[RMDB]
Chemical mapping of a 177-nucleotide RNA with 2A3 and DMS. Conditions: 150 mM KOAc, 10 mM MgCl2 and 150 mM bicine (pH 8.5), 24 C. 2A3 adducts were read by reverse transcription with SuperScript II with manganese. Source: RMDB library OK2TRN, as collected in RNAgym. Reactivities are rounded to 0.1 and cut off at 0 and 3. Reactivities are given for positions 27 through 126.
RNA sequence: GGGAACGACUCGAGUAGAGUCGAAAAUGGAAAACAAAGGUUUGCCUAUGCUGAUAGGUACACAGCAUCAUUUGGUCAGUGCAGGAAUCAGGGUCUAUAUCACCUGCACCAGGAAUUUCAAAUGCAGUCAAGACACCACAUUCGUGUGGUGUCUUGAAAAAGAAACAACAACAACAAC
Reactivity to 2A3 in 0.01 (KOAc 150mM, MgCl2 10mM, bicine 150mM(pH8.5), 24C), signal-to-noise 1, nucleotides 027 to 126: u110g030g020a050a000a010a020c080a160a180a020g170g000u030u070u100g000c000c000u020a030u040g090c040u130g120a070u010a040g000g160u240a050c070a020c010a050g100c030a080u050c000a030u090u040u070g030g000u060c000a020g000u000g000c000a000g000g120a040a060u140c060a130g110g100g020u000c050u160a230u000a000u300c040a090c050c000u000g030c020a000c000c010a020g080g000a090a050u120u120u020c020a030a040a020u020g020c000a030g070
Reactivity to DMS in 0.01 (KOAc 150mM, MgCl2 10mM, bicine 150mM(pH8.5), 24C), signal-to-noise 2, nucleotides 027 to 126: u000g000g000a080a020a070a050c190a050a060a080g010g010u000u000u000g000c000c000u000a050u000g030c150u020g000a070u030a040g020g020u010a070c080a050c030a070g010c060a010u000c020a020u000u000u000g020g010u000c090a090g020u000g010c000a000g020g010a080a060u000c210a080g010g030g020u010c200u000a110u000a080u020c100a060c020c000u000g000c000a010c000c090a160g010g020a040a020u000u000u000c020a030a060a050u010g010c170a110g000